This 207-nucleotide RNA was probed chemically with 2A3. Conditions: 150 mM KOAc, 10 mM MgCl2 and 150 mM bicine (pH 8.5), 24 C. The data come from the RNA Mapping Database (RMDB), library RSTRND.

RNA sequence: GGGAACGACUCGAGUAGAGUCGAAAAUUAAUAUUGCUAUAGUAGAGGUCUUGCGAAAGCUUACCACACAAGAUGGACCGGAGCGAAAGCUCCAAUAUCUAGUGUACCCUCGCUGACUAUGUGAUCUUAUUAAAAUUAGGUUAAAUCGAGGUUAAAACUGAUAGUUGGACUUCGGUCCAACUAUCAGAAAAGAAACAACAACAACAAC
Reactivity to 2A3 in 0.01 (KOAc 150mM, MgCl2 10mM, bicine 150mM(pH8.5), 24C), signal-to-noise 1, nucleotides 027 to 156: u070u080a020a060u090a040u210u080g040c000u040a010u100a190g020u120a080g050a100g180g040u040c060u180u100g040c000g000a080a000a000g000c050u070u030a010c040c000a000c080a000c000a020a010g010a010u020g000g060a050c190c140g000g000a000g000c010g040a070a090a040g000c000u000c000c010a000a000u020a000u000c010u000a050g000u010g000u060a060c000c000c010u010c000g040c010u040g040a010c060u060a040u200g050u030g010a060u050c060u010u120a010u070u200a130a070a150a190u170u040a020g000g090u000u140a080a000a000u080c040g010a050g020g000u020u060a000a090a010a120